[RMDB]
RNA sequence: GGGAACGACUCGAGUAGAGUCGAAAAUGAAAGAGCGUCGCAAACUCACAGACUAAGUCUCACACUGACUGACGCUAAACCGCUCUGUCAGUGUGGGAGAUAUCGGUAUUAAUGUGAGCGGAAAAAAGACCAUUGAGAUGUUCGCAUCUCAAUGGUCAAAAGAAACAACAACAACAAC
Reactivity to DMS in 0.01 (KOAc 150mM, MgCl2 10mM, bicine 150mM(pH8.5), 24C), signal-to-noise 4, nucleotides 027 to 126: u000g000a070a070a090g010a070g000c020g040u000c020g020c060a050a070a090c060u000c030a010c040a090g010a050c090u000a110a140g000u000c000u000c030a000c000a010c000u000g000a020c000u000g000a020c100g010c030u010a020a100a150c190c070g000c070u000c010u000g000u000c000a010g020u000g010u000g000g000g000a000g000a080u000a050u020c090g010g030u000a060u010u010a050a120u010g010u000g000a010g000c030g010g000a010a050a050a110a080a060
Reactivity to 2A3 in 0.01 (KOAc 150mM, MgCl2 10mM, bicine 150mM(pH8.5), 24C), signal-to-noise 2, nucleotides 027 to 126: u170g040a060a040a030g070a010g030c040g030u030c020g030c060a020a030a120c020u010c020a030c020a030g040a040c050u090a160a080g150u030c000u000c010a000c000a000c010u000g000a000c000u020g010a020c060g000c020u020a120a050a040c020c020g030c030u010c010u010g000u000c010a010g000u010g000u000g020g010g000a000g010a000u080a020u040c050g020g050u040a050u090u130a180a100u060g010u000g020a000g010c060g050g000a050a060a010a010a020a030